[RMDB]
RNA sequence: GGGAACGACUCGAGUAGAGUCGAAAAACAAGCCGCUGUUCGAGGCCGUGCAGGAGCAGGGCAUCGACCCGCGAUGGUGAUCAUAGAGCUGAUGCGCCGGGUGGUAGGUCUCGCACAGGGAGCUACCCUCACCAUGACUAUUCGUAGUCAUGGUGAGAAAAGAAACAACAACAACAAC
Reactivity to DMS in 0.01 (KOAc 150mM, MgCl2 10mM, bicine 150mM(pH8.5), 24C), signal-to-noise 4, nucleotides 027 to 126: a100c180a100a060g000c020c010g000c000u010g010u000u000c000g000a060g000g020c000c010g020u010g010c030a090g000g000a210g010c040a060g010g000g000c000a040u000c030g020a040c020c020c050g020c110g010a060u000g010g020u010g000a200u010c050a040u000a140g000a080g010c060u010g000a060u010g000c020g010c030c010g000g000g010u010g000g000u010a120g030g000u000c000u000c000g020c140a050c080a070g000g000g000a070g010c010u000a090c050c010
Reactivity to 2A3 in 0.01 (KOAc 150mM, MgCl2 10mM, bicine 150mM(pH8.5), 24C), signal-to-noise 6, nucleotides 027 to 126: a000c040a030a000g010c020c010g090c080u000g010u010u010c010g010a000g010g000c020c040g160u220g050c010a050g020g160a090g020c040a080g030g030g020c020a090u080c050g100a150c010c030c010g040c030g060a100u140g010g090u070g040a050u070c030a050u070a110g110a030g100c060u040g030a050u080g080c040g040c020c000g080g090g020u050g030g020u040a040g000g020u010c000u000c000g000c000a040c010a010g010g030g000a030g000c010u070a080c000c000